[RMDB]
RNA sequence: GGGAACGACUCGAGUAGAGUCGAAAAUGCUAAGGGUUUGAUAUCUGCUAAAACCCGGUGCAUUCAUCAAUGCAGGUUAAGCCAAAGGGAUGUCCCGACCGGAGGCCGACAAUCCAGGGAAACGGAUAAAAGAUUGGUGGGUUCGCCCACCAAUCAAGUAGAAUGAUGCGUUCGCGCAUCAUUCUACAAAAGAAACAACAACAACAAC
Reactivity to DMS in 0.01 (KOAc 150mM, MgCl2 10mM, bicine 150mM(pH8.5), 24C), signal-to-noise 1, nucleotides 027 to 156: u000g000c040u000a300a300g000g010g010u030u000u000g000a240u000a080u000c000u000g110c080u010a190a040a070a050c000c000c010g000g090u050g000c010a010u000u040c140a150u000c120a040a140u000g000c080a110g000g010u000u000a080a070g010c000c010a000a300a300g000g000g000a080u000g000u000c020c020c000g010a190c000c000g030g030a300g000g000c000c000g010a150c140a070a050u000c070c050a030g000g050g000a090a080a150c120g000g030a180u040a010a090a060a200g000a040u010u000g000g000u000g030g000g000u000u000c300g080c040c000c000a070c000c000a010a000u000c000a000a160
Reactivity to 2A3 in 0.01 (KOAc 150mM, MgCl2 10mM, bicine 150mM(pH8.5), 24C), signal-to-noise 1, nucleotides 027 to 156: u080g000c010u010a050a060g000g000g000u000u000u000g010a010u000a000u040c000u000g000c010u020a000a020a020a020c000c000c000g000g000u000g000c020a070u090u170c050a050u100c030a120a150u240g070c030a000g000g010u000u030a020a000g020c000c000a050a000a030g000g000g000a020u060g030u000c000c010c000g010a000c000c000g000g000a020g000g000c010c000g000a000c010a090a030u080c160c090a010g000g000g000a020a050a000c060g100g060a060u160a070a140a000a020g000a000u020u020g010g010u010g000g080g000u060u040c110g060c040c000c000a000c000c000a000a000u000c000a000a000
About this RNA: Chemical mapping of a 207-nucleotide RNA with DMS and 2A3. 2A3 adducts were read by reverse transcription with SuperScript II with manganese. Reactivities are given for positions 27 through 156. For 2A3, 842 sequencing reads were counted.